An RNA of 177 nucleotides, treated with DMS and 2A3 and read out base by base. For 2A3, 948 sequencing reads were counted.
[RMDB]
RNA sequence: GGGAACGACUCGAGUAGAGUCGAAAAGAAAGAAGAAACUCGCCAAAAGCGAGUAGGAUCUUCUGGCAUAGAACUGAAGACAGAGGAUCCAGCCAGCAAAAAGCUCGCAUUCAGUUCAAUGCCGAAACACUGACUGCGAUUUCGAUCGCAGUCAGUGAAAAGAAACAACAACAACAAC
Reactivity to DMS in 0.01 (KOAc 150mM, MgCl2 10mM, bicine 150mM(pH8.5), 24C), signal-to-noise 2, nucleotides 027 to 126: g020a110a040a060g020a060a030g000a010a110a010c000u000c000g000c000c010a140a110a090a300g000c030g000a000g020u000a000g040g020a100u010c000u000u010c000u000g010g030c000a030u000a030g050a020a000c000u000g000a000a000g000a190c070a220g000a030g000g000a100u010c100c080a070g060c070c010a090g010c100a130a070a030a110a210g000c030u000c160g050c210a140u000u000c000a000g000u000u000c020a130a000u000g010c000c020g000a060a110a050
Reactivity to 2A3 in 0.01 (KOAc 150mM, MgCl2 10mM, bicine 150mM(pH8.5), 24C), signal-to-noise 2, nucleotides 027 to 126: g150a020a100a000g030a010a000g050a030a080a010c000u000c030g020c000c000a000a000a130a020g000c000g010a000g010u010a000g000g030a010u030c000u010u000c030u030g000g000c010a000u000a140g000a000a000c000u030g000a090a020g080a020c170a060g190a010g090g030a120u120c070c000a020g030c000c000a020g000c020a040a030a030a300a030g020c000u000c030g000c010a040u000u000c010a000g000u020u000c020a020a000u000g000c000c000g020a000a040a000

About this RNA: The DMS profile rests on 1,393 reads. DMS adducts were read by reverse transcription with MarathonRT. The RNA was probed in 150 mM KOAc, 10 mM MgCl2 and 150 mM bicine (pH 8.5) at 24 C. Source: RMDB library OK1LIB, as collected in RNAgym. DMS (dimethyl sulfate) methylates the pairing face of unpaired adenines and cytosines. Reactivities are given for positions 27 through 126. 2A3 adducts were read by reverse transcription with SuperScript II with manganese.